[RMDB]
RNA sequence: GGGAACGACUCGAGUAGAGUCGAAAACAAGCUUCCAACAGGCAAGCAACAAGAUAGAGGAGCCCCCAUGACGCUGGAACCGUCCCGGAAGUGGGAGAAAGGGAGGCGAAGAUAGAAGGGGAGACCCGAACGUUGUGCUUCGGCACAACGAAAAGAAACAACAACAACAAC
Reactivity to DMS in 0.01 (KOAc 150mM, MgCl2 10mM, bicine 150mM(pH8.5), 24C), signal-to-noise 5, nucleotides 027 to 129: c090a130a100g020c000u000u010c040c030a180a110c190a080g070g000c180a040a020g000c130a110a090c220a110a140g000a070u070a070g060a040g020g020a070g000c090c010c010c040c060a070u050g000a040c080g000c080u040g000g060a130a090c070c000g000u010c020c070c050g000g000a050a060g060u060g000g040g020a080g090a000a090a120g040g010g000a100g030g080c080g040a070a060g010a100u070a000g020a090a080g010g040g030g000a130g000a130c000c020c010g030a030a030
Reactivity to 2A3 in 0.01 (KOAc 150mM, MgCl2 10mM, bicine 150mM(pH8.5), 24C), signal-to-noise 3, nucleotides 027 to 129: c060a070a020g000c030u030u010c020c010a080a060c000a100g060g000c060a010a020g050c000a000a080c040a050a030g080a090u150a040g080a100g050g000a000g000c000c000c000c000c030a070u080g020a050c020g050c040u030g010g030a060a070c050c000g040u000c000c010c010g040g020a110a000g090u140g010g030g000a030g050a050a040a030g010g010g000a000g000g020c030g000a030a000g010a020u190a050g070a040a060g000g000g000g000a030g020a010c000c010c000g000a040a000

An RNA of 170 nucleotides, treated with DMS and 2A3 and read out base by base. The reactions ran in a buffer of 150 mM KOAc, 10 mM MgCl2 and 150 mM bicine (pH 8.5), at 24 C. For DMS the reverse transcriptase was MarathonRT. For 2A3 the reverse transcriptase was SuperScript II with manganese. The 2A3 profile rests on 5,913 reads.